Chemical mapping of a 177-nucleotide RNA with 2A3 and DMS. The 2A3 profile rests on 4,810 reads. The RNA was probed in 150 mM KOAc, 10 mM MgCl2 and 150 mM bicine (pH 8.5) at 24 C. It was measured as part of the RMDB library OK2TST. For 2A3 the reverse transcriptase was SuperScript II with manganese. The DMS profile rests on 8,227 reads.

RNA sequence: GGGAACGACUCGAGUAGAGUCGAAAACAAUGGGUAAAAACUCAAUUGCGGGCAUUAAAACAUUACAAGGACGAUAGGAGGGGUUUAUAUGGAUUACAAGCGCGACAAUUUAAACCGUCACGCGUUCUAGGUAUAAUAUGUUCGCAUAUUAUACCUAAAAAGAAACAACAACAACAAC
Reactivity to 2A3 in 0.01 (KOAc 150mM, MgCl2 10mM, bicine 150mM(pH8.5), 24C), signal-to-noise 4, nucleotides 027 to 126: c020a010a070u060g000g000g010u130a130a140a080a120a090c010u020c060a040a070u080u080g030c050g020g040g000c010a010u100u180a030a090a060a030c030a040u080u160a060c030a060a040g070g020a020c040g040a070u070a100g000g020a060g010g010g010g000u000u040u000a040u010a030u070g050g010a020u020u110a090c040a150a030g000c020g010c010g010a000c010a000a010u090u160u200a170a060a020c030c020g020u030c020a010c050g020c010g020u050u030c050
Reactivity to DMS in 0.01 (KOAc 150mM, MgCl2 10mM, bicine 150mM(pH8.5), 24C), signal-to-noise 7, nucleotides 027 to 126: c090a100a080u010g000g010g010u010a060a080a110a130a110c040u000c040a050a060u010u010g020c090g010g000g000c060a040u010u010a030a050a100a100c090a050u010u010a070c150a080a100g010g010a060c110g000a120u010a050g000g000a100g000g000g000g010u000u000u000a050u010a080u010g000g000a120u000u010a050c200a070a120g010c010g010c030g010a020c020a050a060u000u010u020a060a090a130c300c160g000u000c010a030c010g010c000g000u000u010c110